About this RNA
Chemical mapping of a 177-nucleotide RNA with 2A3 and DMS. For DMS the reverse transcriptase was MarathonRT. 2A3 is a SHAPE reagent: it acylates the 2'-hydroxyl of flexible nucleotides of all four kinds.
[RMDB]
RNA sequence: GGGAACGACUCGAGUAGAGUCGAAAACAAUGCCAUGGAUCAUAUUUAGGUCCUUAUUACACAUAUAGUGGCUAUUUGUGUUACUCCGACUGUUCAUACUAAUGGAGUGUUCGUUACUCUGCUCAGCCCCGCAAAAUGGAUUCGUCCAUUUUGCGGGAAAAGAAACAACAACAACAAC
Reactivity to 2A3 in 0.01 (KOAc 150mM, MgCl2 10mM, bicine 150mM(pH8.5), 24C), signal-to-noise 2, nucleotides 027 to 126: c000a020a070u010g000c000c000a060u100g000g000a010u000c040a040u110a300u300u260u150a130g020g000u000c000c000u030u030a130u090u200a060c150a000c010a010u150a020u050a250g090u020g040g000c000u060a100u050u060u040g040u040g040u100u120a000c000u000c000c000g060a070c090u050g080u120u200c060a070u130a270c020u070a140a040u090g000g010a000g020u010g090u000u000c000g000u000u010a030c000u000c010u010g000c000u000c000a020g000c030
Reactivity to DMS in 0.01 (KOAc 150mM, MgCl2 10mM, bicine 150mM(pH8.5), 24C), signal-to-noise 1, nucleotides 027 to 126: c020a030a020u010g020c000c000a040u010g020g010a010u000c000a160u020a170u000u010u020a150g000g010u000c000c010u000u010a040u000u000a050c180a100c300a070u000a120u000a040g060u020g000g010c020u000a070u000u000u000g030u000g010u000u010a020c000u000c000c000g020a120c250u020g030u000u010c200a190u010a110c050u000a050a140u000g010g000a010g020u020g020u000u000c060g020u040u020a020c000u000c010u000g000c010u000c020a090g000c070